[RMDB]
Overview: An RNA of 177 nucleotides, treated with DMS and 2A3 and read out base by base. Conditions: 150 mM KOAc, 10 mM MgCl2 and 150 mM bicine (pH 8.5), 24 C.
RNA sequence: GGGAACGACUCGAGUAGAGUCGAAAACCGACUCAUUCACCCACAUGCCAAGCAAGAAACGCUUGAGAUAGCGAAGCUUAGCAGAUGAGUGAAUGAAGCGGGAGGUAACGUUCCGAUCUCGCGCCGUACCAUCUCAGACUUUCGAGUCUGAGAUGGUAAAAGAAACAACAACAACAAC
Reactivity to DMS in 0.01 (KOAc 150mM, MgCl2 10mM, bicine 150mM(pH8.5), 24C), signal-to-noise 2, nucleotides 027 to 126: c000c000g040a030c000u010c000a040u000u000c000a000c010c010c000a010c300a070u000g000c000c030a000a000g010c000a170a140g040a160a180a150c000g040c000u010u010g000a120g040a130u030a010g000c000g000a020a140g000c000u000u000a090g010c000a020g000a140u030g000a050g000u010g000a030a000u010g000a000a020g010c020g000g000g020a020g030g000u010a040a120c080g010u000u000c000c000g000a100u030c000u000c010g000c040g070c070c090g020u000
Reactivity to 2A3 in 0.01 (KOAc 150mM, MgCl2 10mM, bicine 150mM(pH8.5), 24C), signal-to-noise 6, nucleotides 027 to 126: c000c000g100a090c010u010c010a000u000u000c000a000c010c010c000a040c010a060u020g000c000c010a010a000g000c010a090a040g100a240a240a050c010g000c000u010u040g010a020g010a050u120a000g000c020g010a070a010g000c000u000u020a010g000c010a010g030a140u030g000a000g000u000g000a000a000u000g000a010a010g010c000g040g020g030a030g030g040u070a150a080c080g040u100u030c020c010g020a050u020c010u010c020g080c000g010c030c030g040u020
Background
Source: RMDB libraries RFM100 and RFMREP, as collected in RNAgym. For DMS the reverse transcriptase was MarathonRT.